RNA sequence: GGGAACGACUCGAGUAGAGUCGAAAAACUCAGAUAGAGAUAGGCGCCGCUGAAACUGAGCAGCACUCCACAAAUCAGGGUGACGCAAGUCCACCACAGGAACUUCAGCAGGCGCAUGGGUAGAUUCGUGUCUCCUAAAAUUCGUUUUAGGAGACACAAAAGAAACAACAACAACAAC
Reactivity to DMS in 0.01 (KOAc 150mM, MgCl2 10mM, bicine 150mM(pH8.5), 24C), signal-to-noise 4, nucleotides 027 to 126: a090c000u000c000a110g010a170u050a090g000a150g000a130u030a090g000g000c030g040c020c030g000c000u000g020a020a020a180c040u020g020a090g000c030a070g020c020a030c020u000c030c080a150c160a090a100a130u040c220a110g000g000g000u000g000a070c010g020c090a130a080g010u010c050c040a110c090c110a110c150a070g000g000a070a090c170u000u000c010a010g000c000a080g050g020c040g000c000a010u010g020g000g010u010a070g010a130u020u010c290
Reactivity to 2A3 in 0.01 (KOAc 150mM, MgCl2 10mM, bicine 150mM(pH8.5), 24C), signal-to-noise 5, nucleotides 027 to 126: a000c070u080c020a090g050a170u300a070g140a040g040a050u160a180g080g000c000g000c000c010g000c000u000g000a000a000a060c060u040g020a030g040c040a000g020c000a020c000u080c030c020a110c070a090a180a070u150c080a090g000g000g000u010g030a030c040g000c030a070a010g040u000c080c020a050c030c000a070c040a040g070g010a080a050c040u000u010c000a020g000c040a120g020g000c030g000c000a020u020g010g000g000u090a060g010a150u060u170c090